[RMDB]
Background
An RNA of 177 nucleotides, treated with 2A3 and DMS and read out base by base. For DMS, 3,830 sequencing reads were counted. It was measured as part of the RMDB library TTRDES. The 2A3 profile rests on 5,460 reads.

RNA sequence: GGGAACGACUCGAGUAGAGUCGAAAAGAUAUGGAUUGUAGGAGCUUUUGACGGAGACCAUCUCGGAAACGAGAUGGUUCCGAUAAGCUCACUACAAUCCUAAGUCAAACGAGGGUUCGCCCUCGAACUUCUUGGUUAUGUUCGCAUAACCAAGAAGAAAAGAAACAACAACAACAAC
Reactivity to 2A3 in 0.01 (KOAc 150mM, MgCl2 10mM, bicine 150mM(pH8.5), 24C), signal-to-noise 3, nucleotides 027 to 126: g010a010u110a030u210g000g000a000u020u010g000u010a000g020g000a010g020c000u100u140u210u300g300a190c040g000g030a080g070a110c010c010a000u000c000u000c010g010g000a090a080a060c030g000a000g000a010u010g000g020u000u000c000c000g010a010u010a000a010g000c000u000c010a010c000u000a000c000a000a010u000c000c000u010a080a030g020u030c050a090a110a110c040g000a010g020g060g040u150u180c300g250c000c000c000u000c000g010a040a020
Reactivity to DMS in 0.01 (KOAc 150mM, MgCl2 10mM, bicine 150mM(pH8.5), 24C), signal-to-noise 3, nucleotides 027 to 126: g000a040u010a300u000g020g010a010u000u000g020u000a010g000g000a010g000c000u000u000u010u010g000a250c140g000g000a050g000a060c010c000a010u000c000u000c000g000g010a160a090a240c000g020a010g000a000u000g010g020u000u000c000c000g000a090u000a010a010g000c010u000c010a070c000u000a010c000a010a000u000c000c000u010a020a090g010u000c020a070a130a260c040g000a020g010g000g000u000u010c300g040c010c000c000u010c010g000a050a140
High DMS reactivity at an A or C suggests that its Watson-Crick edge is free.
Values cover nucleotides 27 to 126.
The reactions ran in a buffer of 150 mM KOAc, 10 mM MgCl2 and 150 mM bicine (pH 8.5), at 24 C.